Chemical mapping of a 170-nucleotide RNA with 2A3 and DMS. The 2A3 profile rests on 4,773 reads. The RNA was probed in 150 mM KOAc, 10 mM MgCl2 and 150 mM bicine (pH 8.5) at 24 C. 2A3 adducts were read by reverse transcription with SuperScript II with manganese. For DMS the reverse transcriptase was MarathonRT. The DMS profile rests on 8,348 reads. The data come from the RNA Mapping Database (RMDB), library 15KLIB.
[RMDB]
RNA sequence: GGGAACGACUCGAGUAGAGUCGAAAAGCAUAUAAUCUUGUCUCUGCAUCAGGUUUCCGCCUUUGGUGUUAUAAGACCUUUGAUAUUUAUAAUCUCUGGUCUACUUUUACAAAAGUUCAAGGUUUGGUAAUCGGCAUGUUCGCAUGCCGAAAAAGAAACAACAACAACAAC
Reactivity to 2A3 in 0.01 (KOAc 150mM, MgCl2 10mM, bicine 150mM(pH8.5), 24C), signal-to-noise 3, nucleotides 027 to 129: g070c050a000u140a030u040a100a070u020c010u020u030g000u030c000u000c010u060g000c010a090u010c040a030g030g030u070u080u000c040c040g000c000c000u170u040u100g030g000u020g030u100u020a070u000a060a050g000a030c000c000u000u000u010g020a000u040a080u040u280u050a100u100a090a010u030c000u000c000u010g000g000u000c010u000a000c000u030u060u070u030a090c070a050a190a000a040g010u000u030c010a010a020g080g040u050u030u040g030g010u110a100a050
Reactivity to DMS in 0.01 (KOAc 150mM, MgCl2 10mM, bicine 150mM(pH8.5), 24C), signal-to-noise 2, nucleotides 027 to 129: g010c200a200u060a110u010a070a060u020c000u030u030g030u000c050u010c050u050g040c060a100u000c080a070g000g000u020u040u050c040c030g000c050c040u070u010u010g030g020u020g040u080u120a090u050a100a010g020a000c000c010u000u030u030g000a000u020a150u000u020u020a090u070a120a060u000c020u000c040u010g020g000u120c000u030a030c070u020u070u020u080a140c260a170a110a030a080g000u000u000c030a000a000g000g000u030u010u050g000g000u060a040a100